Structure probing data (2A3) for a 207-nucleotide construct. The reactions ran in a buffer of 150 mM KOAc, 10 mM MgCl2 and 150 mM bicine (pH 8.5), at 24 C. 2A3 adducts were read by reverse transcription with SuperScript II with manganese.
RNA sequence: GGGAACGACUCGAGUAGAGUCGAAAAGGCUAGUUUAUUAAAUUCAACGUUUUAGAUGCGUACUGAAGUUAAUGAUACUAGUUAAGAUAUAGUCCGUCGGUAGGUGAAAACUUACGGUUCAAAGCUUGAAGCUUGACCCUUGGAAGCAACUCAAUGCCAUCUAGAUGCCGUUCGCGGCAUCUAGAUGAAAAGAAACAACAACAACAAC
Reactivity to 2A3 in 0.01 (KOAc 150mM, MgCl2 10mM, bicine 150mM(pH8.5), 24C), signal-to-noise 1, nucleotides 027 to 156: g000g040c000u000a000g030u000u040u000a010u000u000a000a000a030u010u000c010a060a060c040g010u000u010u100u230a220g060a180u250g000c020g010u010a140c060u040g010a000a000g000u000u000a000a050u020g030a000u030a180c000u010a000g010u020u020a080a000g000a010u080a010u140a110g070u030c030c030g010u010c040g040g010u020a080g070g110u050g100a030a200a000a000c030u020u000a020c010g040g010u110u110c100a120a060a050g060c000u060u050g100a090a010g020c000u000u010g010a020c000c010c020u010u030g050g000a050a000g020c030a030a000c010u030c070a100a140u060g010c000